[RMDB]
RNA sequence: GGGAACGACUCGAGUAGAGUCGAAAAGCCAACUCCUCUAGACAGUGCUGUAAAAAGCGCUCAACAGCUCGCCAUAACCACAGGAAGUUUAGAUAAAGGGACUAGUUUAGCCCUCGCCUUCAAUAACACAUGCAGGCAUAUUCGUAUGCCUGCAUGUAAAAGAAACAACAACAACAAC
Reactivity to DMS in 0.01 (KOAc 150mM, MgCl2 10mM, bicine 150mM(pH8.5), 24C), signal-to-noise 2, nucleotides 027 to 126: g000c020c060a100a130c140u000c030c060u000c040u010a090g020a140c150a030g050u000g000c000u000g020u000a050a040a140a120a030g000c050g000c010u000c130a100a130c160a030g000c100u000c060g020c030c000a070u000a060a090c030c020a090c140a060g020g010a060a080g000u000u000u000a140g000a100u020a010a040a040g000g010g020a080c050u000a020g020u000u010u000a060g010c000c000c020u000c100g000c060c040u000u020c060a070a090u010a120a060c200
Reactivity to 2A3 in 0.01 (KOAc 150mM, MgCl2 10mM, bicine 150mM(pH8.5), 24C), signal-to-noise 1, nucleotides 027 to 126: g060c010c000a010a030c000u000c020c000u000c010u050a030g000a110c040a020g050u010g070c010u020g050u090a020a040a060a060a020g060c040g000c010u010c020a020a040c020a040g050c010u050c050g110c110c000a060u040a090a000c100c000a050c090a060g000g150a090a000g020u000u080u230a090g030a040u120a160a190a000g000g030g020a010c000u050a090g100u200u120u140a020g060c000c000c010u000c050g090c040c020u110u210c050a120a160u080a200a010c020

Chemical mapping of a 177-nucleotide RNA with DMS and 2A3. For DMS the reverse transcriptase was MarathonRT. The 2A3 profile rests on 569 reads. The DMS profile rests on 827 reads. It was measured as part of the RMDB library OK2TRN. The reactions ran in a buffer of 150 mM KOAc, 10 mM MgCl2 and 150 mM bicine (pH 8.5), at 24 C.